[RMDB]
Record summary:
Structure probing data (DMS and 2A3) for a 177-nucleotide construct. Source: RMDB library OK2TRN, as collected in RNAgym. The 2A3 profile rests on 5,653 reads. Conditions: 150 mM KOAc, 10 mM MgCl2 and 150 mM bicine (pH 8.5), 24 C. Values cover nucleotides 27 to 126.

RNA sequence: GGGAACGACUCGAGUAGAGUCGAAAAGAAAGGCAGCUAGUGCAGCCCACGCAGCGGCAUGCUUUUGCAUGCCCAGUCGAGCCCACGACUCAGGGCAGCUGCGGCACUGAGGGCAGCUGCCGAAAGAAUGGUAAAUGGAGUUCGCUCCAUUUACCAUAAAAGAAACAACAACAACAAC
Reactivity to DMS in 0.01 (KOAc 150mM, MgCl2 10mM, bicine 150mM(pH8.5), 24C), signal-to-noise 5, nucleotides 027 to 126: g020a100a120a200g010g010c010a010g010c010u010a080g020u010g020c150a120g010c040c030c060a140c070g000c040a040g010c050g010g020c020a020u010g010c030u000u000u010u030g020c010a080u000g000c000c000c040a030g010u000c050g010a160g000c000c000c020a300c050g000a030c050u010c120a110g000g000g020c080a120g000c000u000g010c030g000g000c220a080c120u000g000a070g010g000g010c030a040g010c000u000g000c010c000g010a030a070a080g000a100
Reactivity to 2A3 in 0.01 (KOAc 150mM, MgCl2 10mM, bicine 150mM(pH8.5), 24C), signal-to-noise 3, nucleotides 027 to 126: g090a040a070a010g000g020c000a010g010c030u100a040g140u100g200c050a020g030c020c010c010a030c020g030c000a020g010c010g020g000c010a010u040g020c020u190u280u210u300g010c010a000u010g000c000c000c020a000g000u010c010g000a010g010c000c000c000a030c010g070a030c020u070c150a080g030g050g000c030a020g000c010u010g000c000g030g010c070a070c170u140g070a130g020g040g000c010a000g000c000u000g000c000c000g000a000a000a000g020a030